[RMDB]
RNA sequence: GGGAACGACUCGAGUAGAGUCGAAAAAAUCGCGUCAGCGGGGUUGAACAGGACUUUUACCGUUGACUGGGCUCAUCAUCCGGAAGUGUUCGUCCUAGCCGGAGGGCCAAGCAGAGAUCUUUGCGCGAACUGCGCACGGAGAAGCCCUGGCGAGGUGCUUCAAUAGUAUCUUCGGAUACUAUUGAAGAAAAGAAACAACAACAACAAC
Reactivity to DMS in 0.01 (KOAc 150mM, MgCl2 10mM, bicine 150mM(pH8.5), 24C), signal-to-noise 2, nucleotides 027 to 156: a070a060u000c030g040c030g010u010c060a050g010c020g000g010g000g050u000u000g030a040a180c070a060g010g000a020c020u030u000u000u010a130c010c000g010u000u000g020a030c030u000g020g010g030c010u000c030a100u000c080a180u000c010c010g030g010a170a070g010u000g030u000u000c100g010u000c060c020u000a160g010c040c000g000g000a150g020g020g000c020c030a070a040g010c030a150g000a170g010a130u020c050u000u010u000g020c020g030c000g040a100a120c160u010g080c000g000c000a020c030g010g010a120g000a090a060g010c000c010c010u000g010g000c060g010a110g020g060u030g000
Reactivity to 2A3 in 0.01 (KOAc 150mM, MgCl2 10mM, bicine 150mM(pH8.5), 24C), signal-to-noise 2, nucleotides 027 to 156: a020a010u050c010g000c010g020u010c010a010g010c010g020g030g010g000u030u110g060a170a030c050a100g040g100a030c020u090u130u150u230a110c000c010g000u000u010g010a020c010u010g020g000g030c020u000c010a130u000c000a040u010c070c000g040g010a060a040g040u040g030u190u090c060g050u130c000c000u010a040g030c010c010g000g030a000g000g010g000c000c010a020a010g080c070a020g060a020g010a110u040c030u050u100u070g000c030g000c010g060a190a120c100u130g000c020g010c020a020c030g020g000a040g010a060a010g010c030c020c000u010g040g000c020g010a010g050g020u060g020

Chemical mapping of a 207-nucleotide RNA with DMS and 2A3. Source: RMDB library RSTRND, as collected in RNAgym. For DMS, 3,127 sequencing reads were counted. The 2A3 profile rests on 1,749 reads. The reactions ran in a buffer of 150 mM KOAc, 10 mM MgCl2 and 150 mM bicine (pH 8.5), at 24 C.